[RMDB]
Background
This 177-nucleotide RNA was probed chemically with 2A3 and DMS. Source: RMDB library VIROID, as collected in RNAgym. Reactivities are given for positions 27 through 126. Conditions: 150 mM KOAc, 10 mM MgCl2 and 150 mM bicine (pH 8.5), 24 C. For 2A3, 2,636 sequencing reads were counted.
RNA sequence: GGGAACGACUCGAGUAGAGUCGAAAAAGGGGAUGCUAGGAGUUAGAGGAGACCCGAGCGAGGAGGAAAGCAAAGAAAGCAACGGGGCUAGCCGGUGGGUGUUCCGCCUCCCGAGAGGGGACGAGUGGAAUUAACCUUAGUUCGCUAAGGUUAAUUCAAAAGAAACAACAACAACAAC
Reactivity to 2A3 in 0.01 (KOAc 150mM, MgCl2 10mM, bicine 150mM(pH8.5), 24C), signal-to-noise 2, nucleotides 027 to 126: a000g010g000g000g000a020u060g020c050u040a030g000g030a050g060u060u060a040g070a020g120g030a040g010a010c000c020c020g000a020g030c030g030a060g000g030a020g000g050a140a010a020g020c060a110a050a090g050a040a120a020g050c030a030a070c060g030g010g000g000c030u020a020g050c020c040g070g000u070g030g030g000u060g070u110u030c030c000g010c010c010u050c000c010c020g080a090g010a030g050g010g000g000a010c060g020a010g040u160g090
Reactivity to DMS in 0.01 (KOAc 150mM, MgCl2 10mM, bicine 150mM(pH8.5), 24C), signal-to-noise 4, nucleotides 027 to 126: a060g020g000g010g010a070u000g000c070u000a060g010g010a080g020u000u000a090g010a120g020g010a100g010a080c030c040c040g000a090g020c090g010a090g000g000a050g010g000a060a060a110g010c070a070a100a130g010a110a070a110g000c050a070a140c110g010g000g000g020c070u000a060g010c050c040g020g010u000g000g010g020u000g020u000u000c040c020g010c050c020u000c020c010c030g000a090g000a140g000g000g000g000a030c060g000a100g020u000g010